Structure probing data (2A3) for a 177-nucleotide construct. For 2A3, 582 sequencing reads were counted. For 2A3 the reverse transcriptase was SuperScript II with manganese. Conditions: 150 mM KOAc, 10 mM MgCl2 and 150 mM bicine (pH 8.5), 24 C. Values are in units of 0.01, from 0 to 300, in steps of 10.

[RMDB]
RNA sequence: GGGAACGACUCGAGUAGAGUCGAAAAACCAUGGGACUCAUCCUGCGCGGUUCGGAAGAGCUCAAGAAACAGGUUCUGCCAUCGUUGGCUGCGGAGGGGGCGAUGGCGUCCUAUGCAUUAAGUGAGACCUGCUACCGUCAUUCGUGACGGUAGCAGGAAAAGAAACAACAACAACAAC
Reactivity to 2A3 in 0.01 (KOAc 150mM, MgCl2 10mM, bicine 150mM(pH8.5), 24C), signal-to-noise 1, nucleotides 027 to 126: a040c040c000a030u050g010g140g050a060c000u000c050a110u020c070c020u040g060c120g020c000g120g160u120u120c000g040g030a140a000g010a020g060c020u050c010a050a050g170a090a070a060c050a020g000g000u050u030c020u210g030c010c010a000u020c040g120u060u160g170g000c070u040g070c080g030g150a140g000g020g010g050g020c030g030a000u000g000g000c050g070u020c000c000u120a130u090g020c090a010u210u220a190a050g040u020g030a050g030a060